[RMDB]
RNA sequence: GGGAACGACUCGAGUAGAGUCGAAAAUGUCCAGUCCCUCCCCGUUCCUGGAGAAGGGAGACUCGGGAACGCCUAGCAUCUGAGGGACGAAGCCGCCCCCGGGCGCUCCCCUCGGAGAUCCACUGGGACCAUUGCAACUAUUCGUAGUUGCAAUGGUAAAAGAAACAACAACAACAAC
Reactivity to DMS in 0.01 (KOAc 150mM, MgCl2 10mM, bicine 150mM(pH8.5), 24C), signal-to-noise 1, nucleotides 027 to 126: u000g020u000c010c020a160g010u000c010c010c020u000c000c040c010c000g000u010u000c010c000u000g000g030a070g000a180a100g010g000g010a100g010a110c010u010c000g000g000g020a010a030c020g010c080c030u020a050g030c160a100u000c020u010g010a060g000g000g020a230c130g010a020a280g010c040c030g020c010c020c020c070c170g000g030g000c040g020c000u000c010c000c010c040u010c000g010g010a040g000a070u010c110c130a120c040u010g000g000g000

This 177-nucleotide RNA was probed chemically with DMS. For DMS, 907 sequencing reads were counted.